[RMDB]
RNA sequence: GGGAACGACUCGAGUAGAGUCGAAAAUGGGUUUGCUGAUGCGCUGGCGUAACAGGUACGGCUGGUCGGCAUUCGUGUUCGGCCUGCCCGUGCUGCCGGUGGUGCUGACCCUGGCCGUGCUGGCCGAUAGCCGAGCUAUCUUCGGAUAGCUCGGCUAAAAAGAAACAACAACAACAAC
Reactivity to 2A3 in 0.01 (KOAc 150mM, MgCl2 10mM, bicine 150mM(pH8.5), 24C), signal-to-noise 2, nucleotides 027 to 126: u120g000g000g010u000u040u030g030c070u190g030a210u230g130c030g000c000u000g030g050c020g090u050a050a100c050a200g020g000u000a000c000g000g000c010u030g010g000u000c000g000g020c080a010u010u060c260g040u010g090u140u300c010g000g000c010c000u010g020c040c000c000g010u060g000c000u000g000c030c030g000g050u030g000g050u040g000c000u000g000a030c000c000c030u010g000g000c000c100g060u170g150c070u160g050g000c000c000g020a080